[RMDB]
This 177-nucleotide RNA was probed chemically with DMS and 2A3. It was measured as part of the RMDB library OK1LIB. For DMS, 6,728 sequencing reads were counted. The RNA was probed in 150 mM KOAc, 10 mM MgCl2 and 150 mM bicine (pH 8.5) at 24 C. Reactivities are rounded to 0.1 and cut off at 0 and 3. 2A3 adducts were read by reverse transcription with SuperScript II with manganese. Reactivities are given for positions 27 through 126.
RNA sequence: GGGAACGACUCGAGUAGAGUCGAAAAGAAGAACACGGAGGAAGAAAACCUCCGUAAAAGAAAAGGGCAAACGGCAUAAGAAAUGGCGAAGCACUGAAUGCCCAAAGCAGAAAGCUAAUCAGUGUAAACGUACCUAUUACUUCGGUAAUAGGUACGUAAAAGAAACAACAACAACAAC
Reactivity to DMS in 0.01 (KOAc 150mM, MgCl2 10mM, bicine 150mM(pH8.5), 24C), signal-to-noise 4, nucleotides 027 to 126: g010a130a090g010a140a090c200a010c010g030g030a020g000g010a100a170g010a080a090a180a150c010c000u000c000c000g010u000a000a030a060a150g000a060a050a030a140g010g000g000c020a060a120a180c000g010g000c030a060u020a110a110g000a050a140a080u010g010g000c020g010a090a120g000c000a000c000u000g000a080a080u020g000c000c010c010a040a030a090g020c120a140g000a120a060a060g010c030u000a100a120u000c000a010g010u000g000u000a050a080
Reactivity to 2A3 in 0.01 (KOAc 150mM, MgCl2 10mM, bicine 150mM(pH8.5), 24C), signal-to-noise 4, nucleotides 027 to 126: g070a050a000g030a060a010c010a000c050g010g000a000g030g000a090a180g060a140a210a040a030c000c000u000c000c000g000u000a020a010a000a010g070a010a060a020a020g020g000g000c000a010a040a000c010g040g000c010a020u070a170a110g110a100a220a000u040g080g020c030g070a070a010g050c000a010c010u010g000a090a020u080g000c000c000c000a050a010a000g020c050a020g130a140a080a020g010c020u050a070a050u020c000a010g020u010g010u030a080a130